[RMDB]
RNA sequence: GGGAACGACUCGAGUAGAGUCGAAAAGACUUGACAUCUACAAAGCCCCUUCGUAGCAGCCGCUGAGUCAUGGUUUCAUUCAAUAACUGGGGACUGUAGCCUAGUCACGGGGACACGUCAUUGGUGCCGGGUAUCAGAGACGAAGGCCAAGAGAUGAUAAAUGAGUAAUAUUCGUAUUACUCAUUUAAAAAGAAACAACAACAACAAC
Reactivity to DMS in 0.01 (KOAc 150mM, MgCl2 10mM, bicine 150mM(pH8.5), 24C), signal-to-noise 5, nucleotides 027 to 156: g000a080c040u000u010g010a100c050a110u000c040u000a140c030a080a100a120g010c020c010c020c040u000u010c050g020u010a130g030c050a090g030c050c030g000c050u010g000a080g000u000c030a100u010g020g020u000u000u000c080a140u000u010c040a090a100u010a040a070c050u000g000g020g030g020a060c030u010g000u000a170g010c050c020u000a070g000u000c020a090c080g010g000g040g000a090c030a050c050g010u000c060a160u000u000g010g020u010g020c000c020g000g010g030u000a070u010c030a100g010a140g000a060c030g010a070a070g020g010c030c030a040a120g010a130g000a080u000g010a260
Reactivity to 2A3 in 0.01 (KOAc 150mM, MgCl2 10mM, bicine 150mM(pH8.5), 24C), signal-to-noise 5, nucleotides 027 to 156: g020a010c050u050u030g030a010c010a100u040c040u060a050c050a060a220a060g020c010c000c010c020u050u060c060g070u050a030g020c060a010g020c020c040g030c070u080g070a030g060u060c050a060u060g050g000u020u080u110c060a080u100u070c050a130a130u080a160a070c070u060g000g000g030g020a000c010u020g030u070a010g000c000c030u050a030g010u040c010a010c090g010g020g000g020a010c040a000c100g070u050c050a060u020u100g050g000u060g050c020c040g000g020g000u060a070u130c050a020g030a010g010a070c030g010a030a030g010g000c000c000a040a030g050a010g010a040u100g020a010
Chemical mapping of a 207-nucleotide RNA with DMS and 2A3. 2A3 adducts were read by reverse transcription with SuperScript II with manganese. Conditions: 150 mM KOAc, 10 mM MgCl2 and 150 mM bicine (pH 8.5), 24 C. For 2A3, 5,453 sequencing reads were counted. It was measured as part of the RMDB library OK3TST. For DMS the reverse transcriptase was MarathonRT.